Structure probing data (2A3) for a 207-nucleotide construct.
The RNA was probed in 150 mM KOAc, 10 mM MgCl2 and 150 mM bicine (pH 8.5) at 24 C.
For 2A3 the reverse transcriptase was SuperScript II with manganese.
It was measured as part of the RMDB library RSTRND.
For 2A3, 1,486 sequencing reads were counted.
[RMDB]
RNA sequence: GGGAACGACUCGAGUAGAGUCGAAAAGAACUCUCUGAGCAAAGAUUAGCUGCUUAAUUAGCAAAAGUUGUUAUUUAGAUAACCUCUAGAUAACCCGGUCUUCAUGGACUCUACCAGAGGUUUGUGAAGUACCGUCAUCUAUCUGGUUGGAAUCUACCCAAUUUCGUAUGUUCGCAUACGAAAUUGGAAAAGAAACAACAACAACAAC
Reactivity to 2A3 in 0.01 (KOAc 150mM, MgCl2 10mM, bicine 150mM(pH8.5), 24C), signal-to-noise 3, nucleotides 027 to 156: g030a040a020c020u000c010u000c040u110g050a010g000c040a090a100a120g040a230u200u170a060g100c060u040g030c010u140u060a200a170u110u230a160g040c080a070a090a060a090g000u030u020g000u030u040a100u090u110u010a010g000a020u030a030a120c000c020u000c000u000a000g000a000u010a000a020c010c000c020g000g000u010c000u000u000c000a000u010g010g010a010c000u000c010u070a150c040c040a060g040a040g230g070u020u000u020g010u000g010a010a010g020u120a040c010c020g040u060c020a060u020c030u050a050u030c010u000g020g000u040u010g030g020a140a030u000c000u010a050c000